RNA sequence: GGGAACGACUCGAGUAGAGUCGAAAAAGAACGAUGUCCUUGUUUGAGGACUGGAGGCUUCUUUUCCCGUCGAGAAGUCUUCUUCGGAGGAGCAGCCUCCGAUUCUUCCUCUUCGGGUACCUCCUCUUUCGGAGCGGCCUUGGGCUUUCGAGGCUUCACUAUGUAGAAACUUCGGUUUCUACAUAGUAAAAGAAACAACAACAACAAC
Reactivity to DMS in 0.01 (KOAc 150mM, MgCl2 10mM, bicine 150mM(pH8.5), 24C), signal-to-noise 1, nucleotides 027 to 156: a070g010a060a070c050g020a090u000g000u000c000c010u010u000g000u000u000u000g020a030g000g010a030c040u000g010g020a050g040g010c010u000u020c050u000u000u020u010c000c010c080g040u000c100g010a040g010a060a060g010u000c040u020u000c040u000u000c040g030g020a060g050g010a140g020c110a170g030c030c000u010c000c000g010a030u000u000c020u000u000c070c030u000c050u000u000c060g020g030g030u010a040c050c010u000c020c020u000c120u010u000u000c090g010g010a040g040c080g010g030c030c030u000u010g020g010g000c070u000u030u000c060g010a070g000g020c010u000u000c030
Reactivity to 2A3 in 0.01 (KOAc 150mM, MgCl2 10mM, bicine 150mM(pH8.5), 24C), signal-to-noise 3, nucleotides 027 to 156: a010g030a060a010c030g040a070u090g030u040c010c000u090u040g240u230u300u300g060a000g000g010a010c030u020g040g000a010g010g000c010u060u010c010u030u080u040u090c020c000c000g010u080c010g020a010g000a030a040g020u040c020u130u020c000u060u030c130g000g000a020g000g030a080g120c090a100g160c060c010u010c010c000g000a000u050u000c000u030u020c030c020u020c040u080u040c020g000g000g070u060a140c040c000u040c020c000u070c000u040u180u120c090g060g020a040g040c070g030g000c010c010u020u040g050g050g000c000u110u170u190c050g020a030g030g000c000u120u070c040
Source: RMDB library OK3TST, as collected in RNAgym.
Structure probing data (DMS and 2A3) for a 207-nucleotide construct.
For 2A3 the reverse transcriptase was SuperScript II with manganese.
The DMS profile rests on 3,894 reads.
The reactions ran in a buffer of 150 mM KOAc, 10 mM MgCl2 and 150 mM bicine (pH 8.5), at 24 C.